[RMDB]
RNA sequence: GGGAACGACUCGAGUAGAGUCGAAAAGAUAUGGACCCGUUCUCGCUUGGAUUUACAGGUCAGGUUGAAGUACUCGGAAACGAGUAUGGAGGACCUGACCUGUUGUCAGCGAGUAGGGUCCUAAGUCCUAUUUGACAGACUUCGGUCUGUCAAAUAGAAAAGAAACAACAACAACAAC
Reactivity to DMS in 0.01 (KOAc 150mM, MgCl2 10mM, bicine 150mM(pH8.5), 24C), signal-to-noise 2, nucleotides 027 to 126: g020a100u000a250u000g000g000a030c010c000c000g000u010u010c010u000c000g050c020u020u010g020g040a030u010u030u000a020c000a010g030g020u000c000a020g000g010u010u000g010a300a300g010u000a010c000u010c000g000g000a130a140a250c010g010a000g020u000a000u000g000g010a300g020g000a010c000c000u000g010a010c000c000u010g010u000u000g000u000c000a010g010c010g000a010g010u010a150g010g010g010u000c010c000u010a010a090g000u000c030
Background
Structure probing data (DMS) for a 177-nucleotide construct. DMS adducts were read by reverse transcription with MarathonRT. Reactivities are given for positions 27 through 126. For DMS, 2,420 sequencing reads were counted.